[RMDB]
The record gives the reactivity of an RNA of 177 nucleotides to DMS and 2A3.
Source: RMDB library TTRDES, as collected in RNAgym.
For 2A3, 4,489 sequencing reads were counted.
Conditions: 150 mM KOAc, 10 mM MgCl2 and 150 mM bicine (pH 8.5), 24 C.

RNA sequence: GGGAACGACUCGAGUAGAGUCGAAAAGAUAUGGACCACGUACGAGCAACAGCUACGGUCGGAAACGACCGUAGACAUGCUCAGUACAGUGGUCCUAAGUCAAACGUACGACGUUCGCGUCGUACGAUCUUGUGGAUUGGUUCGCCAAUCCACAAGAAAAAGAAACAACAACAACAAC
Reactivity to DMS in 0.01 (KOAc 150mM, MgCl2 10mM, bicine 150mM(pH8.5), 24C), signal-to-noise 3, nucleotides 027 to 126: g000a030u000a300u010g000g010a030c000c000a020c010g010u000a020c000g000a010g020c020a080a130c300a210g000c010u000a000c000g000g000u010c030g010g000a110a150a250c000g000a020c000c000g050u000a000g020a050c100a120u000g000c010u000c000a100g020u000a000c000a090g030u000g000g010u000c000c000u000a000a040g000u010c030a060a150a270c020g000u000a000c000g000a020c000g010u010u030c240g050c020g020u000c000g010u000a000c010g000a030
Reactivity to 2A3 in 0.01 (KOAc 150mM, MgCl2 10mM, bicine 150mM(pH8.5), 24C), signal-to-noise 1, nucleotides 027 to 126: g020a000u110a020u170g000g000a010c000c010a000c010g030u030a000c000g020a010g000c000a000a200c040a200g040c000u010a000c000g020g000u000c000g040g020a090a090a030c030g000a000c000c000g000u000a000g030a000c000a000u020g000c010u010c010a020g010u000a000c130a020g010u000g010g000u000c000c010u020a020a000g020u000c030a050a060a030c040g000u000a000c000g000a010c030g000u020u090c300g000c030g070u000c010g000u010a000c000g000a020